The record gives the reactivity of an RNA of 207 nucleotides to 2A3.

RNA sequence: GGGAACGACUCGAGUAGAGUCGAAAACGUGUCCGUCGGCGUAGCCGACAACAUGCCCAGGUAGCCAAGACCUUCAAGGCUACGGUGCGUUGCGACGCACGGUCUGAUUCUUCACAACGACGUUCACAAGAUCGGAUCACUUUCGAGUGAUCCGAAACUUUGGACUUCCAUUCGUGGAAGUCCAAAGAAAAGAAACAACAACAACAAC
Reactivity to 2A3 in 0.01 (KOAc 150mM, MgCl2 10mM, bicine 150mM(pH8.5), 24C), signal-to-noise 1, nucleotides 027 to 156: c030g000u010g010u090c140c140g030u000c010g000g000c290g130u240a020g020c000c000g010a000c000a000a000c010a010u040g100c010c010c030a030g020g020u020a010g010c010c010a100a000g020a010c010c000u040u000c000a000a000g010g010c010u000a000c000g010g000u000g000c000g010u000u050g110c200g050a010c000g010c010a000c010g000g000u000c000u000g040a090u110u150c150u180u150c110a040c040a210a070c100g160a080c120g110u180u120c080a060c020a150a090g030a200u080c010g000g020a000u000c020a020c010u060u190u140c200g060a020g020u010g000a000u000c020c000g000a000a000a000

The data come from the RNA Mapping Database (RMDB), library M2RFPK.